[RMDB]
RNA sequence: GGGAACGACUCGAGUAGAGUCGAAAAUCUACAAGGCUUAAAAGCUUGUUGUUACGUGGGUGUGCAAACUGUUGAAGAUCUGCGUGCUCGCAUGACAUAUGUAUGCCAGUGUGGUGGUGAACGUCAUCAGAAUACUCAUGUUCGCAUGAGUAUUCUGAAAAGAAACAACAACAACAAC
Reactivity to 2A3 in 0.01 (KOAc 150mM, MgCl2 10mM, bicine 150mM(pH8.5), 24C), signal-to-noise 2, nucleotides 027 to 126: u010c000u010a050c000a000a020g030g060c000u130u300a050a190a000a000g020c000u030u050g060u050u030g000u020u000a010c030g000u040g000g040g000u010g000u000g000c010a050a010a060c030u030g080u100u190g080a100a010g020a100u020c020u000g000c010g010u000g010c000u000c000g000c000a000u050g000a010c000a020u100a030u130g070u090a050u150g000c060c000a060g030u060g030u000g170g030u040g030g030u040g120a010a010c020g020u000c010a040u000
Reactivity to DMS in 0.01 (KOAc 150mM, MgCl2 10mM, bicine 150mM(pH8.5), 24C), signal-to-noise 2, nucleotides 027 to 126: u000c040u000a060c040a140a040g000g000c010u000u010a090a120a150a190g000c030u010u000g000u000u000g020u000u010a050c100g030u020g010g010g010u000g000u000g020c030a000a000a110c070u000g000u020u010g000a130a060g010a090u000c080u000g030c030g020u000g000c010u020c000g000c020a050u000g010a010c020a030u000a030u000g010u000a130u010g050c010c060a070g010u010g000u010g010g000u000g030g040u010g000a090a030c080g010u000c160a120u010